Conditions: 150 mM KOAc, 10 mM MgCl2 and 150 mM bicine (pH 8.5), 24 C. An RNA of 177 nucleotides, treated with 2A3 and DMS and read out base by base. The 2A3 profile rests on 15,271 reads.
[RMDB]
RNA sequence: GGGAACGACUCGAGUAGAGUCGAAAACGUCAGCACCAACAAUGCCCGCACGGUCGAUGGCGAACAGGACCGGAAGCUUUUGAAUCGCCACGUCAUGCAACACCUGAUCAUAGGCGCGUUGCAGGAAGCAUGCACUAUUAUUCGUAAUAGUGCAUGCAAAAGAAACAACAACAACAAC
Reactivity to 2A3 in 0.01 (KOAc 150mM, MgCl2 10mM, bicine 150mM(pH8.5), 24C), signal-to-noise 8, nucleotides 027 to 126: c030g050u030c020a020g020c030a030c030c010a030a050c040a050a110u120g020c000c010c020g040c020a050c030g040g000u030c020g080a190u070g010g010c010g000a060a060c040a080g040g060a020c020c010g080g080a060a040g050c010u060u070u060u100g080a080a050u030c020g020c010c010a020c030g070u040c020a040u040g010c000a020a010c010a020c010c010u050g090a150u240c090a130u180a170g030g000c090g020c060g150u020u010g000c000a000g030g020a040a020
Reactivity to DMS in 0.01 (KOAc 150mM, MgCl2 10mM, bicine 150mM(pH8.5), 24C), signal-to-noise 6, nucleotides 027 to 126: c060g010u000c050a060g000c010a050c040c020a060a060c120a100a100u010g000c020c010c020g020c070a160c080g000g020u000c020g010a120u000g000g010c020g010a040a170c090a090g000g000a050c040c020g010g020a080a140g000c210u010u000u010u000g010a120a110u000c030g020c010c010a070c180g010u000c040a070u000g000c010a010a020c030a070c020c020u000g010a100u010c210a120u010a050g020g010c180g000c190g020u000u000g000c000a020g000g010a090a140